[RMDB]
RNA sequence: GGGAACGACUCGAGUAGAGUCGAAAAUUAGGGGAUCGAAGAGGAUCAGAUACCCUCGUAGUCUUAACUAUAAACUAUGCCACUUAUGUGUUGUCUAACUCAUCUUUUUGAGUUUGGCAUUGCAUUAGGAUUGUGAUAACUUCGGUUAUCACAAUCCAAAAGAAACAACAACAACAAC
Reactivity to 2A3 in 0.01 (KOAc 150mM, MgCl2 10mM, bicine 150mM(pH8.5), 24C), signal-to-noise 6, nucleotides 027 to 126: u160u040a010g000g010g000g020a000u050c020g020a110a040g100a050g190g100a070u040c030a010g040a060u120a110c000c000c000u000c000g000u010a010g010u000c050u110u110a130a070c090u070a050u120a210a060a000c020u010a030u130g050c040c000a120c070u130u080a020u020g030u000g000u040u010g010u000c000u010a000a000c010u000c010a040u040c160u050u160u090u080u050g000a000g000u000u000u000g000g010c000a000u000u100g000c000a010u040u050a080
Reactivity to DMS in 0.01 (KOAc 150mM, MgCl2 10mM, bicine 150mM(pH8.5), 24C), signal-to-noise 2, nucleotides 027 to 126: u000u000a020g030g030g010g000a020u040c020g000a090a170g010a140g020g020a050u020c160a190g000a070u010a140c030c000c000u010c020g040u000a030g010u000c080u000u010a070a140c180u010a120u030a040a110a070c060u000a010u000g010c020c030a220c110u010u020a010u020g000u000g010u020u000g000u000c010u000a010a030c000u000c000a020u000c290u010u000u030u000u000g030a040g000u000u000u000g000g000c010a000u000u010g010c000a010u000u020a160